[RMDB]
RNA sequence: GGGAACGACUCGAGUAGAGUCGAAAAAAAGUCACGUUUGUGAUUUCGGGAGAGCACAGAACGGGACGACGGCGCUCUUGCUGGGUCAUCUGGGCCAGGUGACGAAGAAACAGUUUCCUGGUGAAGCUGCCUGUCCUUAAUUCGUUAAGGACAGGCAAAAAGAAACAACAACAACAAC
Reactivity to DMS in 0.01 (KOAc 150mM, MgCl2 10mM, bicine 150mM(pH8.5), 24C), signal-to-noise 2, nucleotides 027 to 126: a050a080a120g000u000c020a030c000g020u000u010u000g000u000g020a020u000u000u000c080g010g050g000a180g000a090g000c040a040c040a090g010a030a030c030g010g010g000a020c020g020a160c150g010g010c040g000c030u000c020u000u020g020c100u010g050g010g000u000c020a060u000c050u000g020g010g000c040c030a100g000g010u000g000a050c030g020a080a130g020a130a060a070c200a110g000u000u000u000c000c000u000g000g020u000g020a030a100g000c210
Reactivity to 2A3 in 0.01 (KOAc 150mM, MgCl2 10mM, bicine 150mM(pH8.5), 24C), signal-to-noise 1, nucleotides 027 to 126: a000a000a000g000u010c000a000c020g020u010u130u130g040u020g030a080u080u150u130c000g010g070g030a060g030a010g020c030a010c010a090g220a170a020c000g000g000g040a020c030g000a010c010g050g050c010g010c180u000c010u000u130g000c010u060g020g000g010u000c020a020u000c030u070g020g110g000c040c000a000g020g010u000g010a010c050g030a110a120g130a090a110a050c060a020g000u000u000u020c010c000u060g020g000u050g020a060a050g100c050